[RMDB]
RNA sequence: GGGAACGACUCGAGUAGAGUCGAAAAAAGGAAACACAAGUGGUCUGAAAACAUGAAAAAGUGCUCAGUCUCACAAAGAAAUGCAAACUAACAUGGUACCAUUUUCCAUUAAUCAGAUAGACAAAGAACUAUACGCAGUGUUCGCACUGCGUAUAGUAAAAGAAACAACAACAACAAC
Reactivity to DMS in 0.01 (KOAc 150mM, MgCl2 10mM, bicine 150mM(pH8.5), 24C), signal-to-noise 3, nucleotides 027 to 126: a080a100g000g010a090a050a070c190a070c120a060a100g040u000g020g000u000c040u010g010a080a060a170a090c090a050u020g030a090a090a080a160a070g010u000g000c110u010c160a080g030u000c020u000c040a080c200a070a070a070g000a030a020a050u000g010c020a020a000a070c050u010a050a080c050a050u000g000g010u000a060c030c010a080u020u000u000u000c030c030a090u010u010a050a030u010c060a070g000a070u010a050g000a040c150a030a100a140g010a090
Reactivity to 2A3 in 0.01 (KOAc 150mM, MgCl2 10mM, bicine 150mM(pH8.5), 24C), signal-to-noise 2, nucleotides 027 to 126: a010a030g130g010a130a090a000c100a010c020a170a090g010u010g060g000u030c020u030g050a020a030a060a040c010a000u080g100a080a070a040a030a030g030u010g000c000u020c020a060g050u040c050u020c040a040c020a040a150a010g060a040a040a010u120g000c040a060a050a040c050u080a030a010c010a070u080g050g030u080a000c010c020a010u050u060u000u000c020c010a050u050u140a040a030u130c040a000g090a240u130a060g090a040c090a040a160a010g090a090